[RMDB]
RNA sequence: GGGAACGACUCGAGUAGAGUCGAAAAAGCAACGAGUGUGUGUGGGACGUUUUAUCCCAAGCUCUGAGUAGAGCACGCGCUCACACACACCGCGAGCGAGCAACAGCAGAGCGCAAACGCUGGUAAAAUCGUGAGAAUAAUUCGUUAUUCUCACGAUAAAAGAAACAACAACAACAAC
Reactivity to 2A3 in 0.01 (KOAc 150mM, MgCl2 10mM, bicine 150mM(pH8.5), 24C), signal-to-noise 9, nucleotides 027 to 126: a000g060c050a050a050c020g020a120g070u010g000u000g000u000g000u010g010g010g030a040c010g010u010u040u140u210a150u100c020c020c010a010a010g000c000u010c010u070g300a230g170u300a020g190a000g000c010a000c030g040c010g010c000u000c000a000c000a000c000a000c000a000c000c000g030c020g010a020g010c010g010a020g030c020a010a090c000a030g020c020a020g040a040g120c070g000c100a090a050a030c060g000c020u040g020g080u160a100a100a010
Reactivity to DMS in 0.01 (KOAc 150mM, MgCl2 10mM, bicine 150mM(pH8.5), 24C), signal-to-noise 9, nucleotides 027 to 126: a100g010c030a180a040c030g000a250g010u000g010u000g010u000g020u000g000g000g000a080c010g010u000u010u000u010a130u010c030c040c040a090a110g010c000u000c000u000g010a180g020u010a060g000a020g010c010a100c110g010c060g000c000u000c000a010c000a010c000a010c000a010c010c010g000c030g000a180g000c020g010a120g000c070a070a060c050a040g000c030a080g010a110g010c080g010c120a050a070a100c110g000c020u000g000g000u010a050a050a080

Source: RMDB library M2PK90, as collected in RNAgym. An RNA of 177 nucleotides, treated with 2A3 and DMS and read out base by base. For DMS, 49,139 sequencing reads were counted.